Structure probing data (2A3 and DMS) for a 177-nucleotide construct. 2A3 adducts were read by reverse transcription with SuperScript II with manganese.

[RMDB]
RNA sequence: GGGAACGACUCGAGUAGAGUCGAAAAGGUCGCGCAGGUAGCGGACGAUGUUGCUCAGGGCGUGGGUCUCGGCCGGGUUGAGGCCGGCGGCCGGUUCGUCCAGGCAGAUGAGUUCCGGCCGCGUGCACCACCGGAGGGAUUUCGAUCCCUCCGGUGGAAAAGAAACAACAACAACAAC
Reactivity to 2A3 in 0.01 (KOAc 150mM, MgCl2 10mM, bicine 150mM(pH8.5), 24C), signal-to-noise 1, nucleotides 027 to 126: g060g020u120c030g000c020g000c150a110g050g000u130a040g180c020g040g000a020c000g010a060u140g040u110u060g010c070u050c200a140g060g000g020c060g000u070g080g030g020u000c030u010c030g050g010c000c020g170g000g080u120u210g120a070g040g010c010c010g010g060c090g000g000c000c000g000g100u050u060c000g030u040c030c030a010g000g090c020a000g010a170u040g010a030g070u120u070c010c000g000g080c000c000g000c000g000u040g010c020a050
Reactivity to DMS in 0.01 (KOAc 150mM, MgCl2 10mM, bicine 150mM(pH8.5), 24C), signal-to-noise 1, nucleotides 027 to 126: g010g000u000c030g010c020g000c030a140g040g010u000a110g020c010g010g010a050c050g010a100u010g000u000u000g020c030u010c080a140g030g030g000c030g020u010g010g000g030u000c030u010c000g000g010c020c040g020g010g000u000u010g000a130g010g020c030c020g030g000c070g030g010c000c000g000g000u010u020c020g030u000c010c000a290g000g010c070a060g000a030u010g010a190g000u000u000c020c000g000g020c010c000g060c020g010u010g000c080a210
Overview:
2A3 is a SHAPE reagent: it acylates the 2'-hydroxyl of flexible nucleotides of all four kinds. The reactions ran in a buffer of 150 mM KOAc, 10 mM MgCl2 and 150 mM bicine (pH 8.5), at 24 C. Reactivities are given for positions 27 through 126. For DMS, 1,799 sequencing reads were counted.